RNA sequence: GGGAACGACUCGAGUAGAGUCGAAAACCCCCAAGUUUCGACUUGGGGGAAUUAAAAUCAGCGGUAAAUAAUUAGCUCGCGUUAGCGCUGAACGCGAGCAUAGAGCAAUGCGCUUCGGCGCAUUGAAGGCAUAAUUUAAGUUCGCUUAAAUUAUGCCAAAAGAAACAACAACAACAAC
Reactivity to 2A3 in 0.01 (KOAc 150mM, MgCl2 10mM, bicine 150mM(pH8.5), 24C), signal-to-noise 4, nucleotides 027 to 126: c000c000c010c000c000a000a000g010u000u060u120c120g100a010c000u000u000g000g010g000g000g030a000a020u140u120a040a010a020a090u030c010a000g010c030g300g150u170a030a040a060u080a020a080u160u160a060g010c000u000c000g010c000g000u020u020a120g090c010g000c010u000g010a000a000c000g000c000g020a000g000c000a000u060a010g050a020g010c000a000a000u000g000c010g000c010u020u010c210g080g000c000g000c000a000u000u010g000a020a020
Reactivity to DMS in 0.01 (KOAc 150mM, MgCl2 10mM, bicine 150mM(pH8.5), 24C), signal-to-noise 3, nucleotides 027 to 126: c000c000c000c000c000a020a000g000u000u000u020c150g010a020c000u000u000g000g000g010g000g000a000a010u010u010a040a060a100a100u000c010a010g010c000g030g030u000a010a060a020u000a030a020u010u020a130g010c000u000c010g010c000g000u000u000a090g010c010g020c010u010g000a040a010c000g000c000g000a010g020c010a030u010a030g010a170g010c020a010a000u010g010c010g020c010u010u000c180g040g000c000g020c000a000u000u000g000a060a090

About this RNA: Chemical mapping of a 177-nucleotide RNA with 2A3 and DMS. For DMS, 3,925 sequencing reads were counted. 2A3 adducts were read by reverse transcription with SuperScript II with manganese. The data come from the RNA Mapping Database (RMDB), library M2PK50. For 2A3, 9,283 sequencing reads were counted. The RNA was probed in 150 mM KOAc, 10 mM MgCl2 and 150 mM bicine (pH 8.5) at 24 C.